[RMDB]
RNA sequence: GGGAACGACUCGAGUAGAGUCGAAAAAACUGUGAGCCGAAAAAAAAGAAAAAGGCCUUUUGCUUCACUGAGAAGAAAGCAGGUCCAGAGAUGAGACAGCUUUGCUUGCCUGGACACACAGUUUGUCAGGGGCAGAGAUGGGAGACACCAAGCCAUGUGUGAAUGAUAGUUUCGACUAUCAUUCACAAAAAGAAACAACAACAACAAC
Reactivity to DMS in 0.01 (KOAc 150mM, MgCl2 10mM, bicine 150mM(pH8.5), 24C), signal-to-noise 1, nucleotides 027 to 156: a020a040c010u000g020u000g010a120g060c040c040g010a010a010a000a070a100a070a140a210g000a090a060a060a110a130g010g010c010c020u000u000u000u000g010c030u000u010c050a180c110u020g000a260g020a070a070g010a020a040a030g020c080a030g020g010u000c010c010a090g000a110g010a110u000g010a100g000a060c060a060g020c070u010u000u000g010c010u000u000g020c020c020u000g030g010a110c000a140c070a050c040a070g010u000u010u000g000u000c030a100g000g000g000g020c020a040g010a090g010a120u000g010g020g000a080g030a100c040a040c020c020a060a090g000c050c020a060u000g020
Reactivity to 2A3 in 0.01 (KOAc 150mM, MgCl2 10mM, bicine 150mM(pH8.5), 24C), signal-to-noise 2, nucleotides 027 to 156: a000a000c080u050g000u020g030a030g010c000c000g010a070a040a030a000a000a020a000a070g110a050a140a010a010a000g060g000c060c040u090u140u060u090g020c020u060u040c040a070c130u160g040a020g020a200a000g070a070a040a000g000c010a020g020g030u000c000c000a040g020a000g000a120u050g020a040g030a040c030a030g060c020u140u110u220g010c020u060u080g060c010c000u040g030g010a000c000a000c000a000c000a070g050u070u050u080g030u020c020a010g000g000g000g000c020a010g000a000g020a090u070g000g030g010a040g000a010c030a010c060c010a020a010g050c010c050a080u260g040